[RMDB]
RNA sequence: GGGAACGACUCGAGUAGAGUCGAAAACAUGUGCGCUUGAACUGCGGCGCUCGGGCAGAGUCGAGAGCCCUUCUGGUUCGUUGCUUGACCGAAGAAAUAUUCAUCCAGCUGCGGUGCCGCGGCACCGUCUACGGUGCGGGUUCGCUCGUACUGUAGAAAAAGAAACAACAACAACAAC
Reactivity to DMS in 0.01 (KOAc 150mM, MgCl2 10mM, bicine 150mM(pH8.5), 24C), signal-to-noise 1, nucleotides 027 to 126: c080a060u020g020u010g000c040g000c020u000u010g020a080a050c040u010g010c030g010g010c030g010c080u000c040g010g000g000c060a130g010a080g020u010c070g010a050g010a140g030c040c030c070u000u000c030u010g020g000u000u000c180g000u000u000g000c300u000u000g000a240c000c000g000a110a060g000a230a300a300u080a090u010u010c050a060u020c020c040a050g000c060u010g000c020g000g010u010g020c000c060g010c120g010g010c010a000c010c050g000
Reactivity to 2A3 in 0.01 (KOAc 150mM, MgCl2 10mM, bicine 150mM(pH8.5), 24C), signal-to-noise 4, nucleotides 027 to 126: c060a070u170g030u060g050c030g020c020u050u090g060a060a030c020u070g010c030g020g000c020g000c010u020c020g020g030g010c080a030g010a020g090u070c030g050a020g000a020g080c020c010c000u040u020c040u070g020g010u000u000c040g000u100u290g000c000u010u120g000a060c000c020g000a060a000g060a020a140a000u300a080u030u080c030a040u020c040c000a010g020c040u070g020c010g020g000u020g030c010c030g070c120g040g000c000a000c000c010g010
An RNA of 177 nucleotides, treated with DMS and 2A3 and read out base by base.
DMS (dimethyl sulfate) methylates the pairing face of unpaired adenines and cytosines.
The reactions ran in a buffer of 150 mM KOAc, 10 mM MgCl2 and 150 mM bicine (pH 8.5), at 24 C.
Source: RMDB library OK1LIB, as collected in RNAgym.
2A3 adducts were read by reverse transcription with SuperScript II with manganese.